[RMDB]
RNA sequence: GGGAACGACUCGAGUAGAGUCGAAAAUAGUGAUCUGUUCCCCAAACCCCCAUUCAAUAAGAAAGGUCUACCUGUAGCUCACAGUCACAGCUAUUAGAGCUGUCCUUGCUUCUUUGGGUUUACUGUUGACACAACCUUUGUUCGCAAAGGUUGUGUCAAAAGAAACAACAACAACAAC
Reactivity to 2A3 in 0.01 (KOAc 150mM, MgCl2 10mM, bicine 150mM(pH8.5), 24C), signal-to-noise 1, nucleotides 027 to 126: u150a030g070u040g100a040u110c000u000g000u000u000c000c000c000c000a000a080a140c000c030c000c010c040a000u070u000c020a140a030u110a120a040g150a090a040a010g000g000u000c000u030a020c000c020u000g020u070a000g000c000u070c000a070c030a050g060u070c070a040c010a040g000c000u060a070u110u260a160g050a100g010c000u010g000u040c010c000u000u020g010c020u000u060c000u030u010u040g000g000g000u000u130u030a070c000u010g060u040u050
Conditions: 150 mM KOAc, 10 mM MgCl2 and 150 mM bicine (pH 8.5), 24 C. An RNA of 177 nucleotides, treated with 2A3 and read out base by base.